[RMDB]
RNA sequence: GGGAACGACUCGAGUAGAGUCGAAAAUUGUUACAAAUGCCAUUCUUAGAAAAAUUAUUUGCGGAAUUAAAAGAAAAUGGUGUGCACACUUGCUUAGACACAUCGGCUGGAUGUGCUAAUGAUACAAGAUAUUCAGUACGUUCGCGUACUGAAUAUCAAAAGAAACAACAACAACAAC
Reactivity to 2A3 in 0.01 (KOAc 150mM, MgCl2 10mM, bicine 150mM(pH8.5), 24C), signal-to-noise 6, nucleotides 027 to 126: u040u020g060u060u100a050c090a050a140a040u140g000c010c000a030u040u000c070u060u090a090g240a110a150a110a150a110u220u170a160u160u130u140g050c060g050g100a040a080u110u080a120a070a030a100g070a010a130a010a000u030g010g020u040g020u080g020c060a030c000a010c060u030u090g000c000u060u070a050g110a120c020a000c000a100u050c020g150g030c150u110g100g010a080u000g010u000g000c000u030a030a030u150g060a030u010a110c050a030a080
Reactivity to DMS in 0.01 (KOAc 150mM, MgCl2 10mM, bicine 150mM(pH8.5), 24C), signal-to-noise 3, nucleotides 027 to 126: u010u010g000u000u030a090c080a120a090a120u030g010c020c010a010u020u010c070u000u000a030g010a080a040a080a070a060u020u020a090u020u060u000g020c120g000g010a080a010u020u010a070a060a070a080g010a050a020a040a070u030g010g010u000g000u020g020c120a040c140a070c050u010u000g020c040u000u010a010g000a140c080a050c050a030u000c010g010g030c110u050g000g000a020u000g000u000g010c000u000a010a020u020g000a080u000a100c220a040a120
Source information: Chemical mapping of a 177-nucleotide RNA with 2A3 and DMS. 2A3 adducts were read by reverse transcription with SuperScript II with manganese. The reactions ran in a buffer of 150 mM KOAc, 10 mM MgCl2 and 150 mM bicine (pH 8.5), at 24 C. Reactivities are given for positions 27 through 126. It was measured as part of the RMDB library OK1LIB.